[RMDB]
RNA sequence: GGGAACGACUCGAGUAGAGUCGAAAAGGGGCUGAUUUGGAUUCGACAUAUAAAUUUGCGUGUUUCAUUAUGAAGCAAGUCAAGUUUAAUGAUCUUGUAAAAAACAUUAAAGUACAAAUAAAUGCAAGCAAUAUAGUUUCAUUUAGUUCAAAACGUUAACCCUAAUAUCGUUCGCGAUAUUAGGGUUAAAAGAAACAACAACAACAAC
Reactivity to DMS in 0.01 (KOAc 150mM, MgCl2 10mM, bicine 150mM(pH8.5), 24C), signal-to-noise 1, nucleotides 027 to 156: g000g030g050g060c020u000g020a140u020u020u000g010g000a230u020u000c060g000a110c000a070u000a160u000a080a060a060u000u000u000g010c030g050u000g000u000u000u000c000a140u010u000a150u010g000a130a130g030c000a050a050g010u010c000a050a090g000u000u020u000a110a070u000g000a080u010c040u020u000g040u020a000a030a060a030a030a060c010a000u000u000a040a030a170g010u000a090c050a010a070a090u000a030a020a020u000g000c110a010a100g010c010a030a080u000a110u010a090g020u000u000u000c020a050u030u050u000a090g000u000u000c030a060a020a090a080c110g020u020u000
Reactivity to 2A3 in 0.01 (KOAc 150mM, MgCl2 10mM, bicine 150mM(pH8.5), 24C), signal-to-noise 2, nucleotides 027 to 156: g030g000g000g030c050u090g160a070u050u150u180g060g030a030u150u110c090g040a000c060a000u160a020u040a050a090a050u060u030u090g020c080g020u050g010u110u030u000c020a010u020u240a100u280g100a060a000g010c020a040a000g020u080c010a030a000g020u040u090u160a120a020u040g030a060u020c000u030u010g000u080a060a060a000a000a000a000c060a030u110u150a170a000a030g040u060a000c010a030a190a000u160a010a000a000u040g030c010a030a040g010c010a040a020u130a030u050a190g010u000u060u000c010a010u090u060u100a040g020u060u080c030a040a100a040a040c030g010u000u000